[RMDB]
Conditions: 150 mM KOAc, 10 mM MgCl2 and 150 mM bicine (pH 8.5), 24 C. An RNA of 177 nucleotides, treated with DMS and 2A3 and read out base by base. Reactivities are given for positions 27 through 126. It was measured as part of the RMDB library OK1LIB. For 2A3 the reverse transcriptase was SuperScript II with manganese. For DMS, 13,296 sequencing reads were counted. DMS adducts were read by reverse transcription with MarathonRT. For 2A3, 17,870 sequencing reads were counted.

RNA sequence: GGGAACGACUCGAGUAGAGUCGAAAACUGUGGUGAGACCCUAUCUAGUAUAGCAAUCCACCAAGCAGGUGAUUUCACACAAUUCAGGUUCUCAAAGAAAAUGCGCCCUGACUUGACAGGUAUGGUCGGUAUAUUAUUAUUUCGAUAAUAAUAUACCAAAAGAAACAACAACAACAAC
Reactivity to DMS in 0.01 (KOAc 150mM, MgCl2 10mM, bicine 150mM(pH8.5), 24C), signal-to-noise 7, nucleotides 027 to 126: c040u010g020u000g000g020u020g000a070g010a070c220c280c000u010a030u000c030u040a150g030u050a030u010a070g020c090a100a080u000c030c020a010c020c000a080a110g010c140a050g000g020u010g010a080u010u010u010c020a060c090a110c070a050a090u010u000c020a040g000g010u000u000c030u000c040a070a080a130g000a070a050a060a080u020g000c100g000c300c000c010u000g000a070c070u010u010g000a090c050a050g000g000u010a030u000g000g010u020c100
Reactivity to 2A3 in 0.01 (KOAc 150mM, MgCl2 10mM, bicine 150mM(pH8.5), 24C), signal-to-noise 9, nucleotides 027 to 126: c010u020g020u060g070g030u040g030a150g010a030c030c020c000u010a030u000c040u040a060g080u130a070u030a050g020c030a030a040u030c040c010a010c010c000a060a040g080c030a020g020g050u050g060a120u020u110u090c060a050c000a000c010a060a050u070u050c030a020g050g020u090u020c020u010c000a090a120a020g140a040a120a020a020u110g020c030g040c020c010c000u020g020a060c010u060u060g030a040c020a030g040g060u100a090u120g050g020u070c040